Chemical mapping of a 177-nucleotide RNA with 2A3 and DMS. It was measured as part of the RMDB library OK2TRN. The 2A3 profile rests on 23,342 reads.
RNA sequence: GGGAACGACUCGAGUAGAGUCGAAAACGUGCGAAAGCACGAAACGUUGCUGCGAUACCAGACAUGAGGAUCACCCAUGUACCAAGGUACGAAAAUAACAUGUCCCUUGGCAGCGCAGCAACGAAAAAAUCAGUAAUACGUUCGCGUAUUACUGAUUAAAAGAAACAACAACAACAAC
Reactivity to 2A3 in 0.01 (KOAc 150mM, MgCl2 10mM, bicine 150mM(pH8.5), 24C), signal-to-noise 8, nucleotides 027 to 126: c000g000u000g000c010g060a180a020a010g000c000a000c010g010a020a010a000c010g010u000u000g000c000u000g000c000g020a040u050a120c030c020a020g040a070c000a010u060g020a170g120g040a180u200c050a230c050c010c010a030u070g000u010a040c010c010a050a040g040g000u010a010c020g070a050a020a050a100u240a060a020c080a070u140g010u020c000c000c040u000u020g020g010c040a040g030c010g000c000a000g000c000a000a000c000g030a030a000a000a000
Reactivity to DMS in 0.01 (KOAc 150mM, MgCl2 10mM, bicine 150mM(pH8.5), 24C), signal-to-noise 8, nucleotides 027 to 126: c020g030u010g010c000g020a120a100a200g010c000a000c010g010a050a080a140c040g010u000u010g010c010u000g000c010g000a120u010a080c040c060a170g000a060c010a010u000g010a130g000g010a150u010c300a110c040c010c010a080u010g010u000a090c020c030a060a060g030g000u000a010c010g000a060a050a050a080u020a090a140c110a050u000g000u000c010c140c090u000u020g010g030c170a050g000c010g000c000a010g000c010a000a000c010g010a000a020a060a050

Overview
For DMS, 12,801 sequencing reads were counted.